[RMDB]
RNA sequence: GGGAACGACUCGAGUAGAGUCGAAAACUCUCCGAGGCAAAUACUUCACACCCCGGCGCGGACCCACUCCGUUGGGAUCUGGAGGCGAUGGAGCAACUGCAGUCUGUAGUUAUACAAGGCCGUGGCCGGUAUUACGCAGGUUCGCCUGCGUAAUACCAAAAGAAACAACAACAACAAC
Reactivity to 2A3 in 0.01 (KOAc 150mM, MgCl2 10mM, bicine 150mM(pH8.5), 24C), signal-to-noise 3, nucleotides 027 to 126: c010u000c000u000c010c010g020a020g030g000c030a000a090a090u100a120c050u070u080c030a060c020a030c040c010c010c030g040g000c050g030c020g020g080a140c000c000c030a010c030u050c050c040g060u100u020g060g030g040a100u020c030u060g050g000a010g000g030c020g030a010u090g020g000a050g030c030a040a030c020u050g040c010a030g090u070c080u110g040u040a030g010u050u060a040u010a090c070a060a100g050g000c010c010g040u050g060g000c030c010
Reactivity to DMS in 0.01 (KOAc 150mM, MgCl2 10mM, bicine 150mM(pH8.5), 24C), signal-to-noise 4, nucleotides 027 to 126: c040u000c030u020c010c020g010a060g000g010c040a100a070a120u000a090c040u010u010c050a080c130a150c070c030c010c030g010g010c060g010c040g020g000a100c020c030c050a110c060u010c100c070g000u000u000g000g000g000a060u000c050u000g010g030a140g010g010c020g010a080u020g000g010a070g000c140a040a050c050u000g020c040a090g000u000c070u010g000u000a030g020u010u000a100u000a080c110a070a090g000g000c000c010g020u000g020g030c050c040

An RNA of 177 nucleotides, treated with 2A3 and DMS and read out base by base.
It was measured as part of the RMDB library OK2TST.
The RNA was probed in 150 mM KOAc, 10 mM MgCl2 and 150 mM bicine (pH 8.5) at 24 C.
The DMS profile rests on 3,200 reads.
Values cover nucleotides 27 to 126.